[RMDB]
RNA sequence: GGGAACGACUCGAGUAGAGUCGAAAACUCGGCAUGCAACUGAUGCGGGGACGCGAUGUAUACAACGUCCACGUCCGUACGCUCGCAUACCGCAUCGGCAUCGGCGAAGGACGGCGCGGCGAAGUCGCCGGUGCGUAGCUUUCGAGCUACGCACCGGAAAAGAAACAACAACAACAAC
Reactivity to DMS in 0.01 (KOAc 150mM, MgCl2 10mM, bicine 150mM(pH8.5), 24C), signal-to-noise 2, nucleotides 027 to 126: c030u000c040g010g010c060a050u000g010c030a090a100c100u010g020a000u000g020c010g010g010g010g000a130c160g010c210g010a030u000g000u000a110u010a040c110a120a060c040g000u010c100c260a080c020g010u010c060c070g040u000a050c070g030c030u000c010g000c040a040u000a130c020c000g010c040a010u030c030g050g010c050a040u000c060g030g000c020g000a050a060g000g010a130c080g020g010c030g020c020g000g010c030g020a070a110g000u000c090g010
Reactivity to 2A3 in 0.01 (KOAc 150mM, MgCl2 10mM, bicine 150mM(pH8.5), 24C), signal-to-noise 2, nucleotides 027 to 126: c030u030c000g100g000c040a050u050g010c020a060a060c110u070g010a000u020g000c000g000g000g000g060a020c080g000c020g030a010u130g070u100a120u050a130c060a110a030c000g060u050c070c050a140c070g040u010c030c040g040u020a030c080g000c050u030c000g040c000a020u080a160c000c000g020c010a040u030c020g000g000c000a060u050c040g060g000c020g000a060a040g090g000a010c010g020g010c050g010c050g000g040c060g030a020a030g080u080c030g000
Chemical mapping of a 177-nucleotide RNA with DMS and 2A3. For 2A3 the reverse transcriptase was SuperScript II with manganese.